Source: RMDB library OK2TRN, as collected in RNAgym. An RNA of 177 nucleotides, treated with DMS and 2A3 and read out base by base. The reactions ran in a buffer of 150 mM KOAc, 10 mM MgCl2 and 150 mM bicine (pH 8.5), at 24 C. For DMS, 114,401 sequencing reads were counted.
[RMDB]
RNA sequence: GGGAACGACUCGAGUAGAGUCGAAAAGGAUGCUACGUAGUUAUAUUGACAACUACCUCUUGUGCAGUUACACAUUGUCAAUCGAUAUGCGAUCGUAACUGCACAUCGCGUAUCGACAUCCAUAUCGCUACUACAUAGAAUUCGUUCUGUGUAGUAGAAAAGAAACAACAACAACAAC
Reactivity to DMS in 0.01 (KOAc 150mM, MgCl2 10mM, bicine 150mM(pH8.5), 24C), signal-to-noise 9, nucleotides 027 to 126: g000g000a020u000g000c030u000a050c100g010u000a020g010u000u000a100u010a230u010u010g010a110c160a020a010c030u000a030c060c160u000c060u000u000g010u000g000c000a020g000u000u000a020c020a120c200a060u000u000g010u000c070a060a090u000c210g000a110u000a050u000g010c060g010a020u000c140g000u000a010a020c030u000g000c020a010c020a000u000c060g010c110g010u000a010u000c020g020a190c040a020u000c000c000a090u010a090u000c100g010
Reactivity to 2A3 in 0.01 (KOAc 150mM, MgCl2 10mM, bicine 150mM(pH8.5), 24C), signal-to-noise 9, nucleotides 027 to 126: g020g000a000u010g000c020u030a020c030g010u010a000g000u030u010a120u030a060u120u220g080a030c040a040a000c010u020a020c000c010u070c020u030u030g000u000g000c000a000g000u010u010a010c040a000c020a060u050u100g060u090c030a060a090u080c050g050a030u020a030u130g040c020g010a020u040c060g000u000a010a010c010u010g000c000a000c000a000u000c010g000c020g010u020a010u050c030g020a040c010a010u000c010c000a020u030a030u060c060g010